[RMDB]
RNA sequence: GGGAACGACUCGAGUAGAGUCGAAAAAACCGCUUGUGUCCAUGCUCGCGGUGUAGAGUCACUAUCAUGGAAUCGCGCUGGGUGGCUGCCUGUCAGUCCGGCACUAGAACACAACAGGCUGGUUCCCGGAUGCGCUUUGCACGCCGUGCUGUUCGGGGUAUCUAGUUAUGUUCGCAUAACUAGAUACAAAAGAAACAACAACAACAAC
Reactivity to 2A3 in 0.01 (KOAc 150mM, MgCl2 10mM, bicine 150mM(pH8.5), 24C), signal-to-noise 7, nucleotides 027 to 156: a000a000c000c000g000c010u000u010g000u000g000u010c000c010a010u020g010c010u020c020g000c020g030g000u020g020u060a120g030a060g090u140c080a060c200u110a110u210c020a010u010g020g000a020a010u040c030g000c010g000c010u010g000g010g030u040g020g000c010u020g000c010c000u020g010u020c010a010g020u020c000c020g020g010c020a020c040u070a030g090a190a040c090a010c020a160a020c000a010g000g010c020u040g100g040u060u060c000c000c000g010g010a040u050g020c030g020c060u120u110u150g070c090a050c100g110c070c060g020u030g010c060u070g030u070u040c010g000g000g020
Reactivity to DMS in 0.01 (KOAc 150mM, MgCl2 10mM, bicine 150mM(pH8.5), 24C), signal-to-noise 4, nucleotides 027 to 156: a060a010c000c000g020c020u000u000g010u000g010u000c020c020a030u010g010c020u000c210g010c010g010g020u010g020u000a100g020a210g010u000c070a120c110u010a060u010c020a040u000g020g010a050a040u000c060g010c060g030c010u000g010g010g010u000g030g010c010u000g010c020c050u000g010u000c030a300g020u010c020c010g000g000c070a080c050u000a130g010a070a100c110a080c050a080a050c020a050g010g010c020u000g030g010u000u000c010c000c010g020g010a110u010g020c020g010c060u000u000u000g010c050a070c050g010c030c050g010u000g020c010u000g010u010u000c010g000g020g020